[RMDB]
RNA sequence: GGGAACGACUCGAGUAGAGUCGAAAAGAGAGAAGUACGGGCAGAGGGAGCUGCCGCGACCACAUGUUUUCCUGCAGCCUGUUGGGUGCGAGGGGAGGCAGUAAAGCUGGAAGGGAGUAGUUGAGAGCCUUCUGGGCAUCCCAAGCCCAGAGCAAGCAAACAGGUGUAAGUUCGCUUACACCUGUUUAAAAGAAACAACAACAACAAC
Reactivity to DMS in 0.01 (KOAc 150mM, MgCl2 10mM, bicine 150mM(pH8.5), 24C), signal-to-noise 1, nucleotides 027 to 156: g000a110g000a070g020a190a170g030u010a120c040g020g000g030c020a090g010a160g000g010g000a090g000c000u010g030c020c020g000c000g030a110c000c080a120c070a040u010g000u000u000u000u000c020c020u010g040c070a200g020c040c020u010g020u010u020g000g050g100u030g010c050g000a120g010g010g000g010a090g000g070c030a050g010u010a130a050a170g060c020u010g030g000a110a080g000g030g010a080g000u010a190g020u000u000g010a110g000a230g000c020c010u000u000c000u000g030g010g000c010a070u000c020c020c000a140a140g000c030c000c000a010g000a060g020c130a060a130g010c180
Reactivity to 2A3 in 0.01 (KOAc 150mM, MgCl2 10mM, bicine 150mM(pH8.5), 24C), signal-to-noise 2, nucleotides 027 to 156: g060a000g020a000g000a080a030g040u070a030c050g020g050g000c050a020g030a070g040g030g010a040g010c010u020g010c010c020g040c020g040a100c010c040a020c030a090u140g070u030u090u090u050c020c030u050g000c040a020g080c010c000u130g050u110u120g070g010g010u060g030c040g020a120g000g010g000g010a030g030g000c010a020g010u060a020a070a010g020c060u070g010g030a030a030g030g000g000a060g030u050a000g030u030u070g050a090g000a010g080c000c010u020u000c010u000g000g020g000c000a050u060c020c010c010a030a010g000c000c000c000a000g000a000g020c000a030a010g060c030